[RMDB]
RNA sequence: GGGAACGACUCGAGUAGAGUCGAAAAGAAGACCGCUGGGGCGCCAGGAAGAGUCCGUAGCGAUAGGAGGGGAUGCUAGGAGUCGGCGGCGACCGAAGCGAGGAGGAAAGCAAAGAAAGCAACGGGGAGAGUCCAGAGUUCGCUCUGGACAAAAGAAACAACAACAACAAC
Reactivity to 2A3 in 0.01 (KOAc 150mM, MgCl2 10mM, bicine 150mM(pH8.5), 24C), signal-to-noise 5, nucleotides 027 to 129: g070a030a010g050a040c000c040g020c050u060g000g000g010g050c020g040c020c040a020g030g030a040a030g020a010g090u010c020c030g130u090a020g020c030g070a110u110a070g020g020a020g000g000g000g000a010u080g020c020u030a030g020g040a030g060u060c070g020g030c020g010g020c030g030a040c000c020g020a030a010g030c040g030a030g000g000a020g000g010a040a010a000g030c070a050a030a040g030a040a050a000g030c040a030a030c030g030g000g000g000a040g000a010
Reactivity to DMS in 0.01 (KOAc 150mM, MgCl2 10mM, bicine 150mM(pH8.5), 24C), signal-to-noise 5, nucleotides 027 to 129: g020a090a030g020a070c060c060g050c080u030g010g000g000g000c110g040c020c070a080g000g000a080a070g030a110g050u060c060c040g020u050a050g040c000g000a120u040a000g010g020a000g000g030g030g010a030u020g000c050u050a080g000g000a060g040u000c090g010g040c000g040g000c000g030a050c050c030g020a030a020g000c210g020a050g000g000a030g000g040a020a060a070g030c070a000a000a000g010a100a090a060g000c060a070a100c140g020g020g010g000a090g030a140